[RMDB]
RNA sequence: GGGAACGACUCGAGUAGAGUCGAAAAAGAACUACAAGAGAAUGGUCAUAAUAUACCUGUUAGAAAUGACGACGGUGAAAUUAUUAACAUCAAGAUUAAUCCUGCAGUAUCAAAAAGGUUAGAAGUAGCAAGGGAAAUGAGAGCUGCAGCAAGCAUGAUGAGAAAACAUGUUCGCAUGUUUUCUCAUAAAAGAAACAACAACAACAAC
Reactivity to 2A3 in 0.01 (KOAc 150mM, MgCl2 10mM, bicine 150mM(pH8.5), 24C), signal-to-noise 4, nucleotides 027 to 156: a010g040a030a020c030u080a030c070a080a020g030a000g030a110a050u070g010g010u040c020a020u030a180a070u080a100u030a080c020c030u020g050u080u070a070g020a100a130a060u060g030a010c070g010a010c050g040g040u070g020a070a090a060u140u080a080u080u120a060a050c020a050u110c030a060a030g060a150u060u090a040a050u070c010c000u010g000c010a010g010u050a030u150c040a020a040a080a040a040g050g010u030u030a020g030a130a010g030u070a010g010c010a010a030g010g000g010a030a100a010u070g000a040g000a000g020c000u000g020c020a010g040c020a050a010g020c020a040u120g020
Reactivity to DMS in 0.01 (KOAc 150mM, MgCl2 10mM, bicine 150mM(pH8.5), 24C), signal-to-noise 3, nucleotides 027 to 156: a120g010a090a100c010u010a070c050a060a160g010a160g020a120a050u010g030g020u000c020a060u000a080a150u000a170u010a050c050c020u030g000u000u000a060g000a130a110a130u010g010a070c050g010a110c060g040g020u000g010a080a110a110u010u000a080u020u020a060a110c040a060u000c030a030a130g000a110u000u000a060a100u010c040c010u000g000c020a090g000u000a110u000c020a010a060a060a050a050g030g090u000u000a050g040a090a090g010u000a060g030c030a040a040g000g000g010a070a100a060u000g000a140g000a120g040c010u000g020c030a060g020c060a040a050g020c050a070u000g010
Notes
Chemical mapping of a 207-nucleotide RNA with 2A3 and DMS. The RNA was probed in 150 mM KOAc, 10 mM MgCl2 and 150 mM bicine (pH 8.5) at 24 C. It was measured as part of the RMDB library OK3TST. 2A3 adducts were read by reverse transcription with SuperScript II with manganese.